[RMDB]
RNA sequence: GGGAACGACUCGAGUAGAGUCGAAAAGUAGCUGCGCCACACGUCCUCCUCGGCGCGGGAGGUGGUCAGCACGAUCACCGGGAUGUGCUGAAGCUGCGGGUCUUCCUUGAGGAUGUCGAGCAGUUCGAUGAUGCAUGAACUUCGGUUCAUGCAUCAUAAAAGAAACAACAACAACAAC
Reactivity to DMS in 0.01 (KOAc 150mM, MgCl2 10mM, bicine 150mM(pH8.5), 24C), signal-to-noise 3, nucleotides 027 to 126: g030u010a050g020c010u000g000c000g010c100c080a140c220a120c030g020u010c040c010u000c010c180u000c040g020g010c030g010c040g010g000g000a220g010g020u010g020g020u000c000a090g030c250a120c160g010a020u010c030a090c040c010g000g020g010a160u020g000u000g010c040u000g010a030a130g020c120u010g020c120g000g000g000u000c070u000u010c000c040u000u000g010a040g000g000a040u000g000u000c060g000a090g000c040a020g010u000u000c060g000
Reactivity to 2A3 in 0.01 (KOAc 150mM, MgCl2 10mM, bicine 150mM(pH8.5), 24C), signal-to-noise 2, nucleotides 027 to 126: g120u110a020g020c000u000g000c040g070c070c040a050c000a010c030g020u020c000c010u030c000c020u020c010g020g000c040g030c040g000g000g020a070g000g000u020g010g010u020c000a020g130c260a080c170g020a020u020c010a010c040c020g000g150g040a030u050g000u010g020c000u010g010a050a030g050c120u220g000c090g000g020g040u060c050u260u170c030c000u060u070g010a020g070g000a010u030g020u030c060g020a010g000c010a000g010u030u040c020g050
An RNA of 177 nucleotides, treated with DMS and 2A3 and read out base by base. The reactions ran in a buffer of 150 mM KOAc, 10 mM MgCl2 and 150 mM bicine (pH 8.5), at 24 C.